Chemical mapping of a 177-nucleotide RNA with DMS and 2A3. 2A3 adducts were read by reverse transcription with SuperScript II with manganese.
RNA sequence: GGGAACGACUCGAGUAGAGUCGAAAAUGGGUGGGCACCAGAUUCUUGUUUGAAUGAUGUAGGCCCGGUGUUAUGGACUUGGUUGGCAUACUAGAAGGCCUUAAAAUUUACUAGAGAUCAAAGUCCCCUCAUUUUACACAUUCGUGUGUAAAAUGAGAAAAGAAACAACAACAACAAC
Reactivity to DMS in 0.01 (KOAc 150mM, MgCl2 10mM, bicine 150mM(pH8.5), 24C), signal-to-noise 5, nucleotides 027 to 126: u010g000g020g020u000g020g000g000c060a180c050c050a090g010a060u000u000c020u000u000g010u010u010u010g010a030a040u010g010a130u010g010u010a050g020g020c000c010c030g010g010u000g010u010u000a040u000g010g010a080c030u000u000g020g020u000u000g000g010c030a070u000a060c060u000a110g000a130a100g010g020c020c010u000u010a030a050a120a060u000u000u000a040c040u000a070g010a090g000a070u000c030a070a080a180g010u000c010c010c110
Reactivity to 2A3 in 0.01 (KOAc 150mM, MgCl2 10mM, bicine 150mM(pH8.5), 24C), signal-to-noise 2, nucleotides 027 to 126: u060g000g040g000u050g010g020g020c030a000c020c010a010g010a040u050u080c040u060u120g160u150u150u160g090a060a050u040g070a030u110g060u120a030g030g060c000c000c020g000g010u030g000u020u050a060u090g030g000a020c040u080u100g080g030u120u050g020g050c030a020u020a080c000u000a020g040a230a020g060g000c000c000u020u000a070a110a030a020u000u020u000a010c000u010a040g000a000g010a110u030c020a090a010a020g060u100c000c030c000
Background
For DMS, 7,303 sequencing reads were counted.